[RMDB]
RNA sequence: GGGAACGACUCGAGUAGAGUCGAAAACUCGCCUGAGUUCGUGGGUAGCUGCUUGAGGCGGCCAGUGAUGGUUUCGUCCAGAUGGAUGAUCGCCGCUGAUCUCCGCUUGUCGGGGGUGAGUACAGAAGAUAGCAGCUUUUUUCGAAAAGCUGCUAUCAAAAGAAACAACAACAACAAC
Reactivity to 2A3 in 0.01 (KOAc 150mM, MgCl2 10mM, bicine 150mM(pH8.5), 24C), signal-to-noise 6, nucleotides 027 to 126: c000u010c000g030c000c030u090g040a050g050u090u060c030g020u080g020g010g020u040a050g030c040u050g030c010u060u140g070a070g080g000c000g000g020c000c000a030g010u060g070a130u140g000g000u040u070u070c020g020u000c010c010a120g040a300u270g100g020a020u040g000a010u040c020g010c020c010g000c020u000g020a030u040c030u000c010c010g010c030u100u180g120u210c030g000g000g000g010g030u020g010a010g000u050a050c020a030g090a100a010
Reactivity to DMS in 0.01 (KOAc 150mM, MgCl2 10mM, bicine 150mM(pH8.5), 24C), signal-to-noise 4, nucleotides 027 to 126: c020u010c020g000c050c020u030g020a090g000u000u030c060g010u000g000g020g020u010a080g000c010u000g000c050u020u010g010a100g010g020c040g000g000c060c020a030g000u030g010a110u000g000g020u000u010u010c020g010u010c000c020a190g020a150u020g000g010a020u010g000a040u020c060g000c030c030g010c010u000g000a040u010c020u000c010c020g010c050u020u010g010u040c030g020g020g030g000g020u000g000a070g010u000a120c140a090g010a130a120
Conditions: 150 mM KOAc, 10 mM MgCl2 and 150 mM bicine (pH 8.5), 24 C. Chemical mapping of a 177-nucleotide RNA with 2A3 and DMS. Reactivities are given for positions 27 through 126. For 2A3 the reverse transcriptase was SuperScript II with manganese. 2A3 is a SHAPE reagent: it acylates the 2'-hydroxyl of flexible nucleotides of all four kinds.